[RMDB]
RNA sequence: GGGAACGACUCGAGUAGAGUCGAAAAGCCGAAGGCCGGGCAUAGAAGGUGGUAUUGCCCUCGACCGCGUUGAAGAUGCCGCCGUAGUGUCCGAGGUAGUCGGCGGAACGCAAUUCGCGCGGAUAGAGUGCCAUUUAGGUUUCGACCUAAAUGGCACAAAAGAAACAACAACAACAAC
Reactivity to 2A3 in 0.01 (KOAc 150mM, MgCl2 10mM, bicine 150mM(pH8.5), 24C), signal-to-noise 1, nucleotides 027 to 126: g070c040c020g010a060a080g090g060c060c030g020g000g040c000a000u040a060g190a200a040g000g040u050g020g030u120a080u100u130g060c000c040c000u020c030g090a160c010c030g000c000g040u100u290g000a040a000g040a070u150g020c000c000g000c000c050g000u020a050g040u000g040u030c040c040g010a050g000g060u060a020g090u050c000g020g000c000g000g000a100a010c090g010c120a020a020u030u060c020g020c020g000c020g060g000a000u110a100g080a040
Reactivity to DMS in 0.01 (KOAc 150mM, MgCl2 10mM, bicine 150mM(pH8.5), 24C), signal-to-noise 1, nucleotides 027 to 126: g060c010c000g010a080a040g010g020c030c030g000g000g020c000a060u000a030g010a090a100g010g030u000g000g000u000a080u020u000g010c020c040c020u000c040g000a090c030c060g010c040g020u000u020g010a090a140g000a120u000g000c010c020g010c010c000g000u000a110g020u000g000u000c000c020g030a110g030g000u030a130g020u000c000g010g000c000g000g030a070a040c100g000c160a090a230u000u000c040g000c030g000c000g000g010a170u000a070g000a210

The data come from the RNA Mapping Database (RMDB), library OK2TST.
Structure probing data (2A3 and DMS) for a 177-nucleotide construct.
The RNA was probed in 150 mM KOAc, 10 mM MgCl2 and 150 mM bicine (pH 8.5) at 24 C.
For DMS the reverse transcriptase was MarathonRT.
For DMS, 1,139 sequencing reads were counted.
For 2A3, 958 sequencing reads were counted.
High 2A3 reactivity points to a flexible backbone, as in loops and unpaired stretches.